An RNA of 177 nucleotides, treated with 2A3 and DMS and read out base by base. The RNA was probed in 150 mM KOAc, 10 mM MgCl2 and 150 mM bicine (pH 8.5) at 24 C. The 2A3 profile rests on 758 reads. For DMS, 1,705 sequencing reads were counted.
RNA sequence: GGGAACGACUCGAGUAGAGUCGAAAAACUGAAGGAGGUCAUAGCACGAAGAGAAGCGGUGGAGGAAAUAUGUAUCUCAGAAGAUUCUAACGAAGAGCCUGAUGCGGAACUAGUUAGAGUACACCCCUCAAUAGAGCCUUUUCGAAGGCUCUAUUGAAAAAGAAACAACAACAACAAC
Reactivity to 2A3 in 0.01 (KOAc 150mM, MgCl2 10mM, bicine 150mM(pH8.5), 24C), signal-to-noise 1, nucleotides 027 to 126: a000c040u030g060a080a020g060g020a020g030g000u050c020a030u070a010g050c000a010c090g100a070a050g030a030g010a160a000g090c020g010g050u120g000g070a030g010g030a030a090a060u130a020u010g060u120a120u010c020u030c010a090g050a160a000g010a130u090u000c000u020a000a060c020g010a120a030g040a010g070c000c040u090g100a100u230g220c170g000g000a000a010c020u010a090g000u010u020a010g020a000g030u010a020c040a020c010c010c010c010
Reactivity to DMS in 0.01 (KOAc 150mM, MgCl2 10mM, bicine 150mM(pH8.5), 24C), signal-to-noise 2, nucleotides 027 to 126: a150c050u000g000a070a050g010g010a090g020g030u000c010a080u000a080g000c090a050c060g000a100a090g010a100g010a070a080g010c110g030g050u000g000g020a100g010g000a060a070a060u010a050u010g000u010a060u020c040u020c070a060g020a090a090g000a040u010u000c010u020a010a040c050g010a120a130g010a080g020c040c050u000g010a150u000g020c150g020g000a040a030c040u000a150g000u010u010a030g010a030g010u010a060c110a160c050c000c010c140